Chemical mapping of a 207-nucleotide RNA with 2A3. The 2A3 profile rests on 586 reads. It was measured as part of the RMDB library RSTRND. Reactivities are given for positions 27 through 156.
RNA sequence: GGGAACGACUCGAGUAGAGUCGAAAAGCUAGGGACGAUCGGCAGCCAAGCGCUAAGGGAGUCUCAUUUUAACUGAUGAGGCUCUGAAGCGUGCAGUUCACAGACUAAAUGGUGGUGGGUUCCCUUGGGGAGCUUAAGAUAUAGUCGGUCCCCACCGCUCUUUAUGCUGCUUCGGCAGCAUAAAGAGAAAAGAAACAACAACAACAAC
Reactivity to 2A3 in 0.01 (KOAc 150mM, MgCl2 10mM, bicine 150mM(pH8.5), 24C), signal-to-noise 1, nucleotides 027 to 156: g040c050u080a060g000g000g010a080c110g020a090u030c010g070g020c010a010g040c000c000a050a030g040c000g030c060u040a120a230g180g000g010a000g000u000c000u000c000a000u020u080u030u060a080a040c150u040g000a000u000g010a000g010g020c000u010c000u030g010a030a000g000c000g000u010g030c050a030g000u090u110c090a040c040a130g110a020c060u120a080a070a150u090g030g010u040g030g100u120g010g030g020u020u010c020c010c000u070u100g100g010g000g000a020g090c020u130u160a120a020g020a070u120a010u100a210g010u020c030g000g090u010c030c050c000c000a020c020c000g040